[RMDB]
RNA sequence: GGGAACGACUCGAGUAGAGUCGAAAAGGUUCCGUCUUCGGACGGAACCAAACAUAGUAUAGCCUGUUGCAUGUAUACUAUGAUAUACCGUAAUGCAACGGAAAAUGCCUAGUUUCGACUAGGCAAAUCGGUACCAUACUUUCGAGUAUGGUACCGAAAAAGAAACAACAACAACAAC
Reactivity to 2A3 in 0.01 (KOAc 150mM, MgCl2 10mM, bicine 150mM(pH8.5), 24C), signal-to-noise 2, nucleotides 027 to 126: g010g000u010u010c010c000g030u000c020u030u090c230g160g010a000c000g000g000a000a010c010c010a000a000a000c000a010u000a000g030u020a020u010a020g060c040c080u050g000u000u010g020c010a010u010g020u020a000u010a000c000u000a000u020g050a000u060a010u040a070c020c000g040u060a040a040u010g000c010a020a000c000g100g020a150a160a020a040u060g000c000c000u020a020g010u030u040u060c190g030a020c020u000a000g000g010c000a000a000a000
Reactivity to DMS in 0.01 (KOAc 150mM, MgCl2 10mM, bicine 150mM(pH8.5), 24C), signal-to-noise 1, nucleotides 027 to 126: g000g020u000u020c000c000g050u000c000u000u000c200g030g000a030c010g000g000a020a000c000c020a020a060a050c000a000u000a010g000u010a020u000a020g030c160c100u010g010u000u000g010c000a000u010g000u000a030u000a000c010u000a000u000g000a070u000a050u000a140c000c030g010u000a050a040u000g000c000a020a020c000g010g000a060a060a090a070u010g020c000c000u010a020g000u000u000u020c200g000a000c050u000a000g000g000c000a020a000a040